[RMDB]
RNA sequence: GGGAACGACUCGAGUAGAGUCGAAAAGAUAUGGAUCCGUAGGCGAGAAGAUAUCGGAAACGAUAUUCUUCGAUGAGCCUACCGGAUCCUAAGUCAAAACCGGCAGAUACGUUCGCGUAUCUGCCGGGGAACGAAUAGUGUUCGCACUAUUCGUUCCAAAAGAAACAACAACAACAAC
Reactivity to 2A3 in 0.01 (KOAc 150mM, MgCl2 10mM, bicine 150mM(pH8.5), 24C), signal-to-noise 3, nucleotides 027 to 126: g010a010u020a000u050g000g000a000u020c000c010g000u000a000g000g050c240g150a100g010a120a000g000a000u000a010u000c000g000g030a000a000a000c010g000a000u000a020u270u180c000u000u000c000g020a110u140g130a030g000c000c000u000a000c000c010g000g010a000u000c000c000u000a000a000g000u010c000a010a010a090a240c000c000g000g020c000a000g000a000u000a000c000g040u040u140c300g000c010g190u010a000u000c000u000g000c000c000g000g000
Reactivity to DMS in 0.01 (KOAc 150mM, MgCl2 10mM, bicine 150mM(pH8.5), 24C), signal-to-noise 4, nucleotides 027 to 126: g010a040u000a010u010g000g000a000u000c000c010g000u000a000g000g020c010g010a170g000a010a010g010a030u000a010u000c000g030g000a010a010a020c000g000a010u000a010u010u010c020u000u010c000g000a160u010g030a230g010c000c000u000a010c160c170g030g000a000u000c000c000u000a000a060g000u000c000a130a050a080a300c000c000g010g000c000a000g000a010u000a000c000g030u000u000c300g030c020g020u000a000u000c000u000g000c010c010g010g000